[RMDB]
Chemical mapping of a 177-nucleotide RNA with 2A3 and DMS. DMS adducts were read by reverse transcription with MarathonRT. For 2A3 the reverse transcriptase was SuperScript II with manganese. The RNA was probed in 150 mM KOAc, 10 mM MgCl2 and 150 mM bicine (pH 8.5) at 24 C. The 2A3 profile rests on 124,497 reads.
RNA sequence: GGGAACGACUCGAGUAGAGUCGAAAAGUGAUGUGCGACAGUUUACUGGAGGCUGCUUUUGUACCUGAGGCCGGAUAGGUACUGCGGUCGAGUCGUAUGACCGGCCAUAUGCGACGAGCACAUCUGAGGCUGCGUCGGUGUUCGCAUCGAUGUGGCCAAAAGAAACAACAACAACAAC
Reactivity to 2A3 in 0.01 (KOAc 150mM, MgCl2 10mM, bicine 150mM(pH8.5), 24C), signal-to-noise 9, nucleotides 027 to 126: g190u100g010a010u010g010u010g010c020g040a030c050a040g030u080u160u140a140c030u020g020g010a020g010g010c000u000g010c010u070u090u130u280g020u020a010c010c040u080g060a080g030g000c000c010g010g010a070u150a100g000g000u010a010c020u030g010c000g000g000u000c010g000a020g010u010c010g000u030a020u050g040a030c000c000g000g000c000c000a030u050a010u080g010c000g000a010c000g010a010g000c000a000c000a010u000c010u010g020a020
Reactivity to DMS in 0.01 (KOAc 150mM, MgCl2 10mM, bicine 150mM(pH8.5), 24C), signal-to-noise 9, nucleotides 027 to 126: g010u020g000a010u000g010u000g000c000g000a080c030a030g000u010u020u020a070c010u010g010g000a110g000g000c000u000g000c010u000u020u020u040g020u000a020c010c010u010g000a090g010g000c000c000g000g000a110u030a070g010g010u000a020c030u000g000c010g010g010u000c000g000a100g000u000c000g010u000a020u010g000a060c010c000g000g000c010c000a120u010a010u010g000c000g000a020c010g000a070g000c000a010c000a010u000c000u000g000a170